[RMDB]
Chemical mapping of a 177-nucleotide RNA with DMS and 2A3. For 2A3, 18,737 sequencing reads were counted. High 2A3 reactivity points to a flexible backbone, as in loops and unpaired stretches. The reactions ran in a buffer of 150 mM KOAc, 10 mM MgCl2 and 150 mM bicine (pH 8.5), at 24 C. The DMS profile rests on 10,173 reads.
RNA sequence: GGGAACGACUCGAGUAGAGUCGAAAAGAUAUGGAGACUCGAGAUCCCAUGGCGAAGAACUCGGAAACGAGGGAGCCAUGAACGAUCGAUGAGAGUCUCCUAAGUCAAAGCCUUCUUCGGAAGGCAACAUAUGGAUGUUGUUCGCAACAUCCAUAUGAAAAGAAACAACAACAACAAC
Reactivity to DMS in 0.01 (KOAc 150mM, MgCl2 10mM, bicine 150mM(pH8.5), 24C), signal-to-noise 7, nucleotides 027 to 126: g010a040u010a300u010g010g000a020g010a020c000u000c000g000a140g000a020u000c000c160c010a030u000g000g010c000g010a080a130g000a110a200c000u000c000g000g000a080a100a170c010g000a020g000g000g000a090g010c010c000a010u000g000a050a090c300g000a000u000c000g000a130u010g000a210g000a010g010u000c000u000c000c000u000a000a060g010u000c040a080a080a160g000c000c000u000u000c000u010u020c200g010g000a020a010g010g010c010a020a050
Reactivity to 2A3 in 0.01 (KOAc 150mM, MgCl2 10mM, bicine 150mM(pH8.5), 24C), signal-to-noise 6, nucleotides 027 to 126: g010a020u070a050u170g000g000a010g010a000c000u000c020g050a050g010a100u000c070c010c000a000u000g000g010c040g140a300a030g010a090a080c010u010c010g010g050a060a060a050c010g000a000g010g000g020a000g000c010c000a010u010g000a080a060c120g000a010u020c020g040a090u250g140a130g010a000g050u000c000u000c000c000u000a040a010g020u000c040a080a050a000g000c000c000u000u010c010u030u060c200g140g010a000a000g000g000c000a010a000